[RMDB]
RNA sequence: GGGAACGACUCGAGUAGAGUCGAAAACGUUCUUGGUCUUGAGGUGCUGGUGGACCUCGGCGGCCAUCUCGAAGUCGAGCACGUUCAUGACCUGGGGUGCGAGCUCAACGAUGGUGACCCUGAGUCCGGAUCCAACGAGAUUCGUCUCGUUGGAUCCAAAAGAAACAACAACAACAAC
Reactivity to 2A3 in 0.01 (KOAc 150mM, MgCl2 10mM, bicine 150mM(pH8.5), 24C), signal-to-noise 1, nucleotides 027 to 126: c010g000u020u030c000u000u050g030g000u000c010u080u100g020a030g030g010u050g040c050u110g020g170u090g050g070a060c000c000u000c010g010g030c030g050g000c020c000a000u010c030u000c040g120a120a040g090u170c050g020a000g040c050a020c090g080u090u070c050a020u160g060a040c010c010u010g030g000g020g030u020g040c010g000a020g000c000u000c030a050a070c040g060a030u030g000g070u040g040a110c010c000c000u060g030a060g150u030c040c000
Reactivity to DMS in 0.01 (KOAc 150mM, MgCl2 10mM, bicine 150mM(pH8.5), 24C), signal-to-noise 2, nucleotides 027 to 126: c130g000u000u010c020u010u000g030g010u010c010u020u010g000a110g040g040u000g040c050u000g020g030u030g010g000a090c010c030u020c110g020g010c180g010g000c030c000a070u000c030u000c090g000a090a100g010u000c010g010a180g000c080a010c030g010u000u000c040a020u010g010a120c230c060u000g010g010g010g020u010g000c010g010a180g010c070u010c070a030a040c200g000a080u000g000g010u000g010a090c020c040c040u000g010a100g000u000c050c130